[RMDB]
RNA sequence: GGGAACGACUCGAGUAGAGUCGAAAAAGUACAUCCACAUAAUGUUAUACUAUUUAGCAAUAAAAAAGAAUGUGCUAUCUAGCCACAUAAAGACACGAGUGAAUCUUAAAUGCAUAUUGCUAGGUGGAAGAAGCCAGUCUGAAAAAGUUACAUACUACUACUAUAAUUAGUUCGCUAAUUAUAGUAGAAAAGAAACAACAACAACAAC
Reactivity to DMS in 0.01 (KOAc 150mM, MgCl2 10mM, bicine 150mM(pH8.5), 24C), signal-to-noise 3, nucleotides 027 to 156: a060g030u020a020c050a080u000c010c020a070c050a100u000a120a060u000g010u010u000a120u010a130c030u000a060u000u000u000a030g010c000a050a110u060a000a080a130a120a130a160g000a080a070u000g010u010g000c000u000a070u000c070u000a080g010c000c080a040c060a070u000a060a050a120g010a050c030a050c040g000a120g030u010g010a070a060u000c020u000u020a050a070a090u000g010c010a100u010a100u000u000g010c020u010a050g020g030u000g010g010a080a050g010a100a110g030c030c030a040g010u000c050u010g000a060a030a090a070a110g000u010u000a060c030a090u010a100c030u010a140
Reactivity to 2A3 in 0.01 (KOAc 150mM, MgCl2 10mM, bicine 150mM(pH8.5), 24C), signal-to-noise 5, nucleotides 027 to 156: a000g090u070a030c010a050u030c040c010a060c030a080u240a180a060u130g060u100u150a140u050a140c060u070a070u130u070u060a030g000c020a050a080u150a150a130a070a020a010a020g080a050a050u070g020u020g010c000u040a110u110c020u040a020g050c050c030a010c010a030u110a040a110a010g050a030c040a010c160g070a040g050u080g060a050a030u030c000u040u090a100a140a100u100g000c030a040u050a080u190u080g010c000u010a030g010g080u010g020g000a060a060g010a020a000g030c020c010a020g030u030c050u060g090a050a060a010a030a050g070u140u120a030c040a040u150a040c030u150a030
An RNA of 207 nucleotides, treated with DMS and 2A3 and read out base by base. It was measured as part of the RMDB library OK3TST. Values cover nucleotides 27 to 156. 2A3 adducts were read by reverse transcription with SuperScript II with manganese.